[RMDB]
RNA sequence: GGGAACGACUCGAGUAGAGUCGAAAACGAGGAGGUGGAGAUCCCAUGCCGACCCGAAGAGGAAAGGAGGACACGGACGACAAACCGUAAGUUCUACUGCCCUUUAUUGUUGGGUGCACCCUGGGACGAACUACGUGGAGUUCGCUCCACGUAGUUCAAAAGAAACAACAACAACAAC
Reactivity to DMS in 0.01 (KOAc 150mM, MgCl2 10mM, bicine 150mM(pH8.5), 24C), signal-to-noise 3, nucleotides 027 to 126: c070g020a130g010g010a160g010g020u000g000g000a100g000a110u000c020c040c020a130u010g010c020c040g020a030c050c030c060g010a070a060g000a060g010g000a040a300a020g000g010a040g040g010a030c020a070c010g000g000a040c040g020a180c300a070a060a050c000c030g000u010a050a060g020u000u000c000u010a050c020u000g010c300c000c020u000u010u000a100u020u010g020u000u020g010g020g000u000g000c050a060c090c040c020u000g010g000g000a090c110
Reactivity to 2A3 in 0.01 (KOAc 150mM, MgCl2 10mM, bicine 150mM(pH8.5), 24C), signal-to-noise 1, nucleotides 027 to 126: c040g030a050g020g030a030g000g000u080g020g040a060g000a040u050c010c020c020a030u090g030c060c070g060a040c010c010c010g050a030a010g050a020g030g010a060a130a000g010g010a010g000g000a010c020a000c030g030g080a020c020g060a070c110a010a080a000c030c000g020u030a060a030g000u000u010c000u010a050c000u010g020c000c020c040u040u030u070a160u100u180g130u050u110g010g000g000u050g000c010a090c030c000c000u000g020g000g000a020c060